Notes
The record gives the reactivity of an RNA of 207 nucleotides to 2A3 and DMS. The DMS profile rests on 4,199 reads. Source: RMDB library M2RFPK, as collected in RNAgym. 2A3 adducts were read by reverse transcription with SuperScript II with manganese. Values are in units of 0.01, from 0 to 300, in steps of 10. The reactions ran in a buffer of 150 mM KOAc, 10 mM MgCl2 and 150 mM bicine (pH 8.5), at 24 C.

RNA sequence: GGGAACGACUCGAGUAGAGUCGAAAAGAAAUUACGUUUCCUUUACACUUCUCAAACCGGGAUCAAGAGAAGCAAAGCAUCCCUCAUAUCCACGAUGGAGGGUGUCGUGGAGUAUGCUGUACCAAAAAGAGCGAACACGGCUUCGGCCGUGUUCGAACAUCGACAAUUAGUUCGCUAAUUGUCGAUGAAAAGAAACAACAACAACAAC
Reactivity to 2A3 in 0.01 (KOAc 150mM, MgCl2 10mM, bicine 150mM(pH8.5), 24C), signal-to-noise 8, nucleotides 027 to 156: g040a010a070a020u200u110a060c070g010u010u020u030c010c000u030u060u090a060c080a050c020u040u030c020u000c060a170a100a060c050c060g040g030g010a040u050c050a250a040g010a010g010a040a020g060c100a040a030a030g020c020a040u010c010c020c000u020c010a030u040a010u030c000c000a000c010g010a010u030g110g090a070g060g030g010u070g000u000c000g000u000g000g010a020g030u020a010u030g030c060u050g080u170a120c030c060a050a060a040a030a030g100a040g080c010g000a000a000c000a000c000g000g010c000u050u070c180g020g000c000c000g000u000g000u010u000c000g000a000a000
Reactivity to DMS in 0.01 (KOAc 150mM, MgCl2 10mM, bicine 150mM(pH8.5), 24C), signal-to-noise 2, nucleotides 027 to 156: g010a060a070a070u000u000a060c150g020u010u000u010c030c020u000u000u010a120c080a070c030u010u000c010u000c010a070a130a140c110c020g000g010g030a110u000c040a130a300g000a020g000a020a020g020c020a050a050a080g000c070a080u000c000c000c020u000c070a100u010a080u000c030c040a030c020g000a030u000g030g030a070g010g010g010u000g000u000c040g030u000g030g000a070g000u000a040u000g040c010u010g010u000a150c080c060a020a070a100a110a110g000a130g000c000g000a020a010c000a040c000g020g040c000u000u000c300g050g030c000c010g050u020g000u000u010c010g020a020a060